Source: RMDB library RFM100, as collected in RNAgym. An RNA of 177 nucleotides, treated with 2A3 and read out base by base. The reactions ran in a buffer of 150 mM KOAc, 10 mM MgCl2 and 150 mM bicine (pH 8.5), at 24 C. For 2A3, 681 sequencing reads were counted.
[RMDB]
RNA sequence: GGGAACGACUCGAGUAGAGUCGAAAAUGAACAGUCUAUCUUCUUCAAGGAACGCUUCGUUCACCAUCAACUCAAUCAAAAUGACUCCCUGCUCCGCAACACCUGCUCCUGCUCCAGCGACUGCAACGUUCCCUGAGCGUUUCGACGCUCAGGGAACAAAAGAAACAACAACAACAAC
Reactivity to 2A3 in 0.01 (KOAc 150mM, MgCl2 10mM, bicine 150mM(pH8.5), 24C), signal-to-noise 2, nucleotides 027 to 126: u170g010a030a040c000a020g060u010c090u060a100u000c020u030u000c020u070u120c070a070a000g040g000a100a000c070g030c040u150u050c080g000u020u020c020a050c080c000a030u060c060a000a110c040u130c070a010a110u020c000a110a050a010a220u040g040a060c010u030c020c010c000u040g040c050u060c000c050g000c010a060a160c020a040c050c000u020g000c000u030c010c010u010g020c000u000c000c000a000g000c000g000a020c020u050g000c020a060a000c100